[RMDB]
Source: RMDB library OK2TRN, as collected in RNAgym. Structure probing data (DMS and 2A3) for a 177-nucleotide construct. The RNA was probed in 150 mM KOAc, 10 mM MgCl2 and 150 mM bicine (pH 8.5) at 24 C. Reactivities are rounded to 0.1 and cut off at 0 and 3. For 2A3 the reverse transcriptase was SuperScript II with manganese.
RNA sequence: GGGAACGACUCGAGUAGAGUCGAAAAGCGAACAGCAGGCGCUUCGCGCGCUGCAGCGUCGAGUACGGCGUGACGAAAUGCAGCAGGUUUUUCGCGACGCCGAGCCAAUCGCACGGAUUGAGCGGAAGCUAUGAUACGGCUUCGGCCGUAUCAUAGCAAAAGAAACAACAACAACAAC
Reactivity to DMS in 0.01 (KOAc 150mM, MgCl2 10mM, bicine 150mM(pH8.5), 24C), signal-to-noise 5, nucleotides 027 to 126: g020c010g000a050a070c300a130g010c030a300g000g000c000g010c210u000u000c060g010c010g020c300g010c000u000g020c010a070g000c020g010u000c020g020a180g010u020a090c040g020g010c020g010u010g010a110c060g020a070a060a080u000g010c010a050g020c030a160g070g000u000u000u000u000u000c020g010c020g000a040c050g010c010c000g000a080g010c010c040a080a210u000c030g000c050a140c110g000g000a100u000u000g000a100g010c040g010g010a160a090
Reactivity to 2A3 in 0.01 (KOAc 150mM, MgCl2 10mM, bicine 150mM(pH8.5), 24C), signal-to-noise 3, nucleotides 027 to 126: g000c010g000a050a030c010a030g040c020a010g020g000c020g020c110u070u070c030g010c000g000c050g000c040u020g000c010a010g070c000g010u020c000g010a060g130u190a110c060g020g030c030g010u050g080a070c120g100a090a000a060u060g000c010a030g010c000a040g040g100u060u170u060u150u240c000g000c030g000a000c000g000c000c030g010a020g000c020c000a010a090u010c030g000c050a060c050g080g030a170u080u120g040a040g060c050g020g070a090a010